Background:
This 177-nucleotide RNA was probed chemically with 2A3. Conditions: 150 mM KOAc, 10 mM MgCl2 and 150 mM bicine (pH 8.5), 24 C.

RNA sequence: GGGAACGACUCGAGUAGAGUCGAAAAAUGCUGUAGUGUCUACAUCAUACUGUAUAGCAUCAGUUGAUAUUACUAUAUCAUUAACAUCAAGUUUUUCGUUUAAAGCUCCUGCAACACCUGUAUUAACAGGACCGUACCACUUCGGUGGUACGGUCCUAAAAGAAACAACAACAACAAC
Reactivity to 2A3 in 0.01 (KOAc 150mM, MgCl2 10mM, bicine 150mM(pH8.5), 24C), signal-to-noise 1, nucleotides 027 to 126: a000u170g020c070u070g000u050a100g000u000g100u140c130u130a150c000a030u000c000a000u000a170c000u000g000u100a070u170a300g000c000a080u130c100a000g020u000u000g000a000u000a000u030u030a000c000u000a000u080a000u150c000a020u040u110a150a000c130a150u000c180a240a290g070u000u000u000u050u050c000g100u180u000u100a000a070a000g000c000u000c100c000u080g070c000a030a030c000a030c000c000u000g030u250a120u120u300a080a000c000